[RMDB]
Structure probing data (2A3) for a 207-nucleotide construct. Reactivities are given for positions 27 through 156. The reactions ran in a buffer of 150 mM KOAc, 10 mM MgCl2 and 150 mM bicine (pH 8.5), at 24 C. For 2A3 the reverse transcriptase was SuperScript II with manganese. Source: RMDB library VIROID, as collected in RNAgym.

RNA sequence: GGGAACGACUCGAGUAGAGUCGAAAAGGAACGCGACGACACGCGUGAGCGCUUGGCGACCAACGGACGACAAUUGCUGAGGCGGCUUUGAUACCAUUUGUCACGGGCCUAGCCCUUCGGCCACCACACUUGGCCCAUGCGGCGCUCCCAUGCCAGGCCCACGACUAAGGUUCGCCUUAGUCGUGGGAAAAGAAACAACAACAACAAC
Reactivity to 2A3 in 0.01 (KOAc 150mM, MgCl2 10mM, bicine 150mM(pH8.5), 24C), signal-to-noise 2, nucleotides 027 to 156: g040g010a000a090c010g070c040g100a100c070g020a020c050a060c190g040c050g020u090g040a010g000c000g000c010u110u070g040g000c100g140a220c060c000a020a050c150g070g080a040c060g020a010c100a100a210u010u160g000c010u000g000a000g040g100c100g010g010c020u120u030u020g040a100u290a300c020c030a070u100u080u120g130u200c080a080c200g000g050g020c000c000u020a010g020c000c020c000u020u030c000g000g030c000c030a040c010c030a100c010a010c020u010u010g000g000c010c020c020a030u040g040c000g030g000c000g020c020u010c040c000c000a080u160g020c050c020a060g000g100